Source: RMDB library OK2TRN, as collected in RNAgym.
This 177-nucleotide RNA was probed chemically with 2A3 and DMS.
High 2A3 reactivity points to a flexible backbone, as in loops and unpaired stretches.
For DMS the reverse transcriptase was MarathonRT.
Conditions: 150 mM KOAc, 10 mM MgCl2 and 150 mM bicine (pH 8.5), 24 C.
[RMDB]
RNA sequence: GGGAACGACUCGAGUAGAGUCGAAAAGAAAGUACAGGCGGGUACGUUGGCAGCAGAGUGCGGCCGCGUUACUUUUGUAACGCGCACUCCGGCCGCUGCCUCCGUCGCCGCCUCGACGGAGGGAAAAAUUAAUAAUUUACUUCGGUAAAUUAUUAAUAAAAGAAACAACAACAACAAC
Reactivity to 2A3 in 0.01 (KOAc 150mM, MgCl2 10mM, bicine 150mM(pH8.5), 24C), signal-to-noise 1, nucleotides 027 to 126: g000a020a080a010g000u000a000c000a000g010g000c000g040g000g000u000a000c040g060u080u130g080g040c040a040g000c030a010g070a000g150u050g040c060g010g020c020c040g000c010g000u040u010a000c010u120u270u300u300g000u000a000a000c000g000c030g000c020a040c060u090c030c040g040g000c020c020g010c000u050g070c000c000u000c000c000g020u010c000g000c000c010g000c020c000u010c000g000a000c000g020g000a030g030g000g000a060a230a130a040
Reactivity to DMS in 0.01 (KOAc 150mM, MgCl2 10mM, bicine 150mM(pH8.5), 24C), signal-to-noise 2, nucleotides 027 to 126: g010a170a090a150g010u000a010c010a010g000g000c000g000g000g010u000a010c000g000u000u000g020g030c030a060g020c080a110g010a140g010u000g010c020g000g020c100c030g000c010g010u000u000a000c000u000u010u010u010g020u000a000a000c000g010c020g020c120a060c070u010c050c070g010g020c010c010g030c030u000g010c010c000u000c000c000g010u000c010g020c000c000g000c000c000u000c010g010a010c020g000g000a020g000g000g020a030a040a060a080